[RMDB]
An RNA of 177 nucleotides, treated with DMS and read out base by base.
The reactions ran in a buffer of 150 mM KOAc, 10 mM MgCl2 and 150 mM bicine (pH 8.5), at 24 C.
It was measured as part of the RMDB library TTRDEL.
RNA sequence: GGGAACGACUCGAGUAGAGUCGAAAAGAUAUGGAGCCAGACAUGCUUAGGGAUCGGAAACGAUCCUGGGAGCAACAGCUGGUCUCCUAAGUCAAAACUUCAAGGUCUGUUCGCAGACCUUGAAGAACCCAAAUACAACCUUCGGGUUGUAUUUGGGAAAAGAAACAACAACAACAAC
Reactivity to DMS in 0.01 (KOAc 150mM, MgCl2 10mM, bicine 150mM(pH8.5), 24C), signal-to-noise 1, nucleotides 027 to 126: g010a030u000a300u000g000g000a040g000c000c020a000g000a040c080a200u010g010c000u000u010a300g040g010g000a010u000c000g030g030a050a040a240c000g010a020u000c000c000u000g000g000g000a000g000c000a020a040c300a200g000c000u030g010g000u030c040u000c000c000u000a040a130g000u000c070a090a060a090a160c020u000u000c010a000a010g000g010u000c040u000g000u000u010c120g020c050a030g010a020c000c010u000u010g040a020a000g010a080a100
The DMS profile rests on 735 reads. Reactivities are given for positions 27 through 126.